This 207-nucleotide RNA was probed chemically with DMS and 2A3. Reactivities are given for positions 27 through 156. Conditions: 150 mM KOAc, 10 mM MgCl2 and 150 mM bicine (pH 8.5), 24 C. The 2A3 profile rests on 1,599 reads.
RNA sequence: GGGAACGACUCGAGUAGAGUCGAAAAAACGCGAUUCGUCGCGUUGUCACGGGGUCAUAUCAUCUUCCGUUUGACGGACAUGCUCUGAAGCCUCCACGGAGCAACAGCCCGAGGAAGGUAUGACGGAGGCACCCAGCACUAUCUCUUCGGAGAUAAAUUUAAUAAUGAGCUUCGGCUCAUUAUUAAAAAAAGAAACAACAACAACAAC
Reactivity to DMS in 0.01 (KOAc 150mM, MgCl2 10mM, bicine 150mM(pH8.5), 24C), signal-to-noise 2, nucleotides 027 to 156: a050a000c010g030c000g050a050u010u030c270g090u000c000g030c000g050u000u010g010u000c080a110c070g000g000g020g050u000c110a040u000a060u000c090a080u020c060u000u010c020c010g040u020u010u020g030a300c080g000g040a010c010a300u020g020c000u000c020u000g000a030a100g000c030c010u000c010c010a300c010g020g070a060g030c000a030a040c110a060g050c030c000c000g000a120g010g010a080a030g040g000u000a020u000g000a070c030g000g000a010g010g020c000a040c000c020c000a300g000c010a120c140u000a060u000c000u010c010u000u000c270g040g000a040g000a010u000a000a020a090
Reactivity to 2A3 in 0.01 (KOAc 150mM, MgCl2 10mM, bicine 150mM(pH8.5), 24C), signal-to-noise 2, nucleotides 027 to 156: a000a000c020g010c020g000a010u040u080c240g040u030c000g110c020g000u000u020g060u030c040a050c210g110g000g040g010u010c000a010u010a010u090c090a110u030c080u030u000c020c020g060u160u170u300g100a050c020g010g000a020c010a090u120g000c010u030c000u010g040a110a030g000c000c000u020c000c000a010c000g000g000a000g080c000a010a040c020a050g180c020c020c050g080a040g010g000a020a000g000g000u000a010u000g000a000c020g000g010a000g000g010c000a000c000c000c000a010g080c040a070c130u060a020u000c000u000c000u020u080c210g140g000a020g010a010u050a010a050a010